[RMDB]
RNA sequence: GGGAACGACUCGAGUAGAGUCGAAAAGACGCCCAGGAGUACCUGGAGGAGGCGAAGCUGAAGGAGCUGGUGGCCAAGUACAGCGAGUUCAUCAACUUCCCCAUCUACCUCUACUCCAGCAAGGAGGACCCUGGUAAUAUUUCGAUAUUACCAGGGUAAAAGAAACAACAACAACAAC
Reactivity to 2A3 in 0.01 (KOAc 150mM, MgCl2 10mM, bicine 150mM(pH8.5), 24C), signal-to-noise 3, nucleotides 027 to 126: g010a030c070g050c040c000c000a010g000g060a070g040u100a110c050c050u050g020g010a040g020g040a030g010g000c060g060a050a010g020c050u050g010a090a030g070g010a020g010c020u030g040g080u060g020g030c040c060a110a020g060u100a110c020a050g040c050g080a070g060u010u060c010a050u010c010a030a050c020u060u080c000c000c030c000a040u000c000u060a130c000c000u020c010u020a060c010u020c000c000a020g030c020a090a120g060g050a030g000g060
Reactivity to DMS in 0.01 (KOAc 150mM, MgCl2 10mM, bicine 150mM(pH8.5), 24C), signal-to-noise 7, nucleotides 027 to 126: g010a150c220g010c020c000c020a120g010g000a110g020u000a030c180c030u000g010g010a300g020g010a080g010g010c170g000a050a050g000c060u000g000a060a080g010g010a280g010c030u000g010g020u000g000g000c060c080a050a120g010u010a080c090a060g000c030g000a190g030u010u000c020a050u000c040a060a050c050u000u010c010c050c010c050a070u000c050u000a140c030c000u000c030u000a080c030u000c010c010a100g000c160a090a090g000g010a080g010g000
This 177-nucleotide RNA was probed chemically with 2A3 and DMS.
The DMS profile rests on 7,862 reads.
For 2A3, 4,525 sequencing reads were counted.